Source: RMDB library OK1LIB, as collected in RNAgym. This 177-nucleotide RNA was probed chemically with 2A3. The RNA was probed in 150 mM KOAc, 10 mM MgCl2 and 150 mM bicine (pH 8.5) at 24 C. For 2A3 the reverse transcriptase was SuperScript II with manganese.
[RMDB]
RNA sequence: GGGAACGACUCGAGUAGAGUCGAAAACUCAUCGAUCCAUCUAUCAUCUAUUCAGACAAGAGCCACUCAAUGAACCGAUCUGAGGUGCUUGGACAUGUGAGGAGAUCCCCUCAUUUGCCAAUACCGACCGUAACCGGCGAUUCGUCGCCGGUUACGGAAAAGAAACAACAACAACAAC
Reactivity to 2A3 in 0.01 (KOAc 150mM, MgCl2 10mM, bicine 150mM(pH8.5), 24C), signal-to-noise 1, nucleotides 027 to 126: c010u010c040a040u150c100g070a000u130c040c000a050u000c010u050a070u000c070a050u050c010u070a040u100u120c040a020g000a040c020a230a000g000a060g090c000c000a040c010u070c050a000a160u130g070a080a030c060c040g070a160u000c050u160g040a100g000g000u060g010c090u000u010g000g030a070c000a000u010g000u000g000a000g040g000a120g000a040u100c000c000c000c000u000c000a000u000u000u060g080c000c010a040a000u000a080c040c040g080a060